[RMDB]
RNA sequence: GGGAACGACUCGAGUAGAGUCGAAAAUACCGGGGAGCUUGAAGACAUCAAUCACGGUAGCAAACACGAGGAUGGCGGCAGUGACGAAAUCUCGGUGGGUGGUCUUUCGGGAGACUUAGCGGACCCACAAGACCCCAAAGCACACGCGGCCUCACACGUUGUGAGAAGUCUUCGGACUUCUCACAACAAAAGAAACAACAACAACAAC
Reactivity to 2A3 in 0.01 (KOAc 150mM, MgCl2 10mM, bicine 150mM(pH8.5), 24C), signal-to-noise 1, nucleotides 027 to 156: u170a000c070c010g000g020g030g000a010g050c040u170u030g040a210a070g140a060c030a060u140c080a050a050u090c030a000c050g060g000u050a050g130c080a000a100a060c110a060c070g020a070g040g000a130u030g150g000c020g060g020c020a000g030u000g080a120c000g030a070a050a150u140c070u020c080g080g000u040g020g090g020u170g050g090u000c000u010u020u070c080g040g090g000a170g020a110c040u000u000a050g060c080g050g030a030c010c000c000a030c010a020a000g010a020c000c050c000c010a060a070a000g020c020a010c000a000c030g010c020g050g000c030c000u070c000a070c000a020c070
The record gives the reactivity of an RNA of 207 nucleotides to 2A3.
The data come from the RNA Mapping Database (RMDB), library OK3TST.
Conditions: 150 mM KOAc, 10 mM MgCl2 and 150 mM bicine (pH 8.5), 24 C.